This 177-nucleotide RNA was probed chemically with DMS and 2A3. The data come from the RNA Mapping Database (RMDB), libraries RFM100 and RFMREP. DMS (dimethyl sulfate) methylates the pairing face of unpaired adenines and cytosines.

RNA sequence: GGGAACGACUCGAGUAGAGUCGAAAAGCACUUUGCGAAUUCGCAGGCCCUAUCCUGUGGUAUGAACUGAGUACGCGAUAAUUUAUGGUGCAUAUUAGGGGCUUACCAUAAGAUAAUGCCAUGAAUUUCUGAAUCAGAAAUUCGUUUCUGAUUCAGAAAAAGAAACAACAACAACAAC
Reactivity to DMS in 0.01 (KOAc 150mM, MgCl2 10mM, bicine 150mM(pH8.5), 24C), signal-to-noise 4, nucleotides 027 to 126: g010c080a100c100u020u020u000g020c040g000a130a070u000u000c030g000c070a090g000g010c010c110c110u010a040u000c000c040u010g040u000g000g000u010a020u010g010a070a040c040u000g010a080g000u000a040c080g010c020g000a080u030a120a120u010u010u020a030u020g010g000u010g020c050a050u000a060u010u000a230g010g000g000g010c040u000u000a020c000c000a010u000a010a020g010a020u000a030a110u000g000c020c020a110u020g010a040a070u000u010
Reactivity to 2A3 in 0.01 (KOAc 150mM, MgCl2 10mM, bicine 150mM(pH8.5), 24C), signal-to-noise 9, nucleotides 027 to 126: g050c030a040c140u110u140u130g010c040g060a160a160u170u130c030g000c050a040g010g000c010c020c010u020a040u060c010c000u010g000u020g020g010u030a030u060g060a050a020c030u030g010a020g060u050a040c040g010c030g090a070u080a160a150u130u160u130a120u150g120g010u110g020c050a010u020a040u090u080a050g020g000g030g000c000u010u030a020c010c000a020u020a030a000g010a010u060a050a030u110g010c020c010a050u110g050a040a070u060u010